[RMDB]
RNA sequence: GGGAACGACUCGAGUAGAGUCGAAAACGUUGUCAUCGACAAGACCCUAUGCAUUCAUGCUCUGUAAGGAUGCGCCGAAAGGUGAGCAAGCCCGAGUUGCCCAGACCUGAAAUGCAACACUUUAGAGAAAACCCGAAGCAGUUCGCUGCUUCGGGAACUACUAUACCUAGUUCGCUAGGUAUAGUAGAAAAGAAACAACAACAACAAC
Reactivity to DMS in 0.01 (KOAc 150mM, MgCl2 10mM, bicine 150mM(pH8.5), 24C), signal-to-noise 3, nucleotides 027 to 156: c060g020u000u000g000u000c050a180u000c060g030a150c030a090a090g000a110c010c000c030u000a110u000g010c010a070u010u000c030a180u000g010c020u000c020u000g020u010a250a130g000g000a140u000g010c020g020c050c020g000a120a110a140g000g040u010g000a080g030c030a140a220g000c030c030c050g020a150g010u000u000g000c020c030c010a130g010a110c020c010u000g000a070a060a100u000g000c020a050a100c050a120c040u000u000u000a080g000a140g010a100a060a080a140c000c000c000g000a030a020g010c000a080g030u000u010c300g020c010u010g040c000u000u000c010g000g000g000a000a010
Reactivity to 2A3 in 0.01 (KOAc 150mM, MgCl2 10mM, bicine 150mM(pH8.5), 24C), signal-to-noise 5, nucleotides 027 to 156: c070g060u010u050g040u040c110a210u140c140g020a020c020a040a030g030a060c020c010c020u050a040u060g000c010a010u010u000c010a040u130g010c020u020c000u010g040u040a050a020g000g010a030u020g010c000g020c010c000g060a090a040a010g010g010u020g050a030g010c030a020a040g040c000c010c020g090a070g050u050u070g040c010c030c010a020g030a050c020c030u060g050a050a100a040u100g010c010a060a030c020a060c100u120u190u190a100g020a010g020a070a070a030a030c000c000c000g000a000a000g010c000a000g010u070u190c210g070c090u000g000c000u010u000c000g000g000g000a000a000

An RNA of 207 nucleotides, treated with DMS and 2A3 and read out base by base. For DMS, 7,013 sequencing reads were counted. The reactions ran in a buffer of 150 mM KOAc, 10 mM MgCl2 and 150 mM bicine (pH 8.5), at 24 C. Values cover nucleotides 27 to 156. For 2A3 the reverse transcriptase was SuperScript II with manganese.